[RMDB]
RNA sequence: GGGAACGACUCGAGUAGAGUCGAAAAGAUCUCAAUGGUCCGUACCACCUGACCAUUGCUAUCGCUAAUGGUGGCGGUCACUUUAUCCGCAGGUCGUUGCAAUUCGAGGCCAAAAGGCGUGGUGCUAGGCUGCCUAUGGAUUCGUCCAUAGGCAGCCAAAAGAAACAACAACAACAAC
Reactivity to DMS in 0.01 (KOAc 150mM, MgCl2 10mM, bicine 150mM(pH8.5), 24C), signal-to-noise 1, nucleotides 027 to 126: g000a090u000c060u020c070a030a090u000g070g000u000c020c060g010u000a130c080c070a020c110c000u000g000a050c000c000a090u000u000g000c160u000a040u000c080g000c070u030a090a050u000g000g050u020g000g030c010g000g000u000c120a070c110u000u000u040a040u010c040c060g010c140a080g020g010u000c030g000u010u000g000c070a100a140u000u010c050g020a120g020g000c030c030a030a030a070a090g000g090c020g010u000g010g020u000g030c110u000a100